[RMDB]
RNA sequence: GGGAACGACUCGAGUAGAGUCGAAAACAAUAAAUGUCCCGUCUUGAAACACGGAUCAAGGAGGCCGUUUUAUGUGCGAGUGUAAGAGUAAUUAAAACUCCGACGCGUAUUGAAAGAAAGAAUAUUCCUUCACAUCUCCGUUCGCGGAGAUGUGAAGAAAAGAAACAACAACAACAAC
Reactivity to 2A3 in 0.01 (KOAc 150mM, MgCl2 10mM, bicine 150mM(pH8.5), 24C), signal-to-noise 2, nucleotides 027 to 126: c010a010a120u220a170a000a060u120g040u010c000c000c050g080u030c000u020u030g060a030a030a030c010a000c090g080g000a130u090c050a040a010g160g050a020g070g120c000c000g020u000u000u100u010a080u130g070u000g000c010g010a050g160u050g010u040a050a020g030a020g070u070a080a110u130u030a000a030a040a070c000u010c000c000g010a000c000g020c000g010u040a040u080u080g060a010a090a070g160a030a030a010g140a020a000u080a090u060u130c030
Reactivity to DMS in 0.01 (KOAc 150mM, MgCl2 10mM, bicine 150mM(pH8.5), 24C), signal-to-noise 1, nucleotides 027 to 126: c070a060a170u000a120a060a090u040g000u000c050c000c000g100u040c070u010u060g000a130a080a040c160a070c060g000g020a180u000c000a040a120g000g090a030g000g020c180c000g010u000u000u000u050a150u010g000u000g010c000g040a060g000u000g000u000a110a030g000a040g000u000a000a070u030u070a050a050a030a000c000u000c000c180g000a060c160g000c010g010u010a030u010u000g050a100a120a110g010a030a180a170g000a070a010u000a190u090u000c070